[RMDB]
RNA sequence: GGGAACGACUCGAGUAGAGUCGAAAACGGUUCGGUGGCUACGGCAAUCGCGAUCACAAUCCGUUGCCGCAUUCCCCCGGAAAACUCACUUGGAAAGGCCUUUAAGCGCUUUUCAGCUUGGUCAAUGGUGCUCAUGGUACUUCGGUACCAUGAGCACAAAAGAAACAACAACAACAAC
Reactivity to DMS in 0.01 (KOAc 150mM, MgCl2 10mM, bicine 150mM(pH8.5), 24C), signal-to-noise 1, nucleotides 027 to 126: c150g000g010u010u010c010g000g000u010g000g000c300u000a040c010g000g020c000a030a000u010c030g100c260g000a020u000c300a080c250a150a230u000c000c000g010u010u020g010c010c000g000c010a010u010u000c010c000c030c020c010g020g000a000a020a070a170c060u000c090a080c100u000u020g020g000a050a020a020g010g020c030c050u000u000u000a100a050g080c110g000c010u000u000u000u010c010a110g010c040u000u000g000g000u010c060a160a040u000g030
Reactivity to 2A3 in 0.01 (KOAc 150mM, MgCl2 10mM, bicine 150mM(pH8.5), 24C), signal-to-noise 1, nucleotides 027 to 126: c010g050g000u070u000c040g060g010u020g040g000c000u040a010c000g010g060c000a020a030u160c130g050c140g100a020u120c110a040c040a170a050u010c010c000g000u010u000g000c000c000g000c000a030u050u130c030c000c000c000c000g000g080a040a070a100a010c060u130c040a020c010u040u140g070g050a040a040a010g030g030c000c000u060u180u170a210a060g010c070g020c050u070u020u010u070c020a000g050c030u060u090g080g000u040c000a040a280u120g050